[RMDB]
RNA sequence: GGGAACGACUCGAGUAGAGUCGAAAAAAAAUCUUGCUAUUUGGGUUUCCUGACCUCUUCAUCAUCUCAGAUCUCACUGUCUGGAUGCCAAUCAAGACAAAUUGGCGGAGCUGACGAAGUUGAAAAACCCUAAAUUAAUGUUCGCAUUAAUUUAGGGAAAAGAAACAACAACAACAAC
Reactivity to DMS in 0.01 (KOAc 150mM, MgCl2 10mM, bicine 150mM(pH8.5), 24C), signal-to-noise 4, nucleotides 027 to 126: a060a060a070a080u000c020u000u000g020c080u010a060u010u000u000g010g000g000u010u000u000c010c010u000g020a200c070c020u000c020u000u000c030a030u000c020a040u000c020u000c040a090g000a110u000c040u000c120a070c150u000g000u000c010u000g020g010a120u010g010c100c110a050a040u000c070a050a060g020a080c120a020a060a110u000u010g010g000c050g010g000a090g000c090u000g000a020c030g020a030a050g010u000u000g000a070a060a090a080a140
Reactivity to 2A3 in 0.01 (KOAc 150mM, MgCl2 10mM, bicine 150mM(pH8.5), 24C), signal-to-noise 3, nucleotides 027 to 126: a000a000a000a010u020c020u050u110g010c010u050a120u230u080u050g080g000g040u000u050u020c020c000u020g070a090c010c010u030c000u050u020c000a040u010c000a020u020c010u010c020a080g010a200u010c030u050c050a080c040u040g030u010c000u020g050g000a040u070g010c020c010a030a040u040c020a090a000g080a130c050a030a140a040u040u040g010g000c020g010g020a030g000c010u010g010a010c020g000a020a010g000u060u100g100a080a050a150a040a030